RNA sequence: GGGAACGACUCGAGUAGAGUCGAAAAUUUGAGACAGAAUUGCCCAGGCUGGAGUGCUGUGGCGCAAUCUCAGCUUACUGCAACUUCCACCUUCUGGGUUCAUGCAAUUCUGGUGCCUCAGCCUCCCAAGUAUCUGGGUUUACAGACAUGCACCACCAUACACGGUCUUAUUCGUAAGACCGUGUAUAAAAGAAACAACAACAACAAC
Reactivity to 2A3 in 0.01 (KOAc 150mM, MgCl2 10mM, bicine 150mM(pH8.5), 24C), signal-to-noise 3, nucleotides 027 to 156: u130u060u050g060a040g020a010c040a030g070a080a080u110u090g000c030c010c020a020g020g000c040u040g000g010a010g010u150g020c000u000g000u020g010g000c030g040c050a170a190u100c080u070c070a020g000c020u070u150a050c030u040g000c020a080a060c070u140u020c050c030a050c030c010u200u160c110u110g070g020g000u030u060c060a050u100g020c000a000a050u050u050c010u060g020g010u060g020c000c000u010c010a020g000c000c020u020c010c010c020a040a000g050u050a090u120c020u020g030g030g010u010u080u100a100c040a030g030a030c020a040u060g020c010a020c030c020a020c020c040
Reactivity to DMS in 0.01 (KOAc 150mM, MgCl2 10mM, bicine 150mM(pH8.5), 24C), signal-to-noise 2, nucleotides 027 to 156: u000u000u000g000a130g010a130c030a150g000a120a090u000u010g000c000c000c010a060g020g000c060u000g020g020a120g040u010g030c000u010g020u000g020g000c010g020c050a080a140u000c080u000c040a100g030c040u000u000a060c050u000g030c000a060a080c040u000u000c050c010a010c050c090u000u000c000u010g020g030g000u000u010c080a060u010g020c020a030a070u000u010c030u000g000g020u000g010c010c010u010c010a040g040c070c020u000c010c010c030a080a100g030u000a050u000c040u000g020g020g000u000u000u010a100c040a140g000a070c070a070u000g010c050a060c030c010a060c110c050
Source information
Source: RMDB library OK3TST, as collected in RNAgym. This 207-nucleotide RNA was probed chemically with 2A3 and DMS. Conditions: 150 mM KOAc, 10 mM MgCl2 and 150 mM bicine (pH 8.5), 24 C. The 2A3 profile rests on 1,857 reads. DMS adducts were read by reverse transcription with MarathonRT.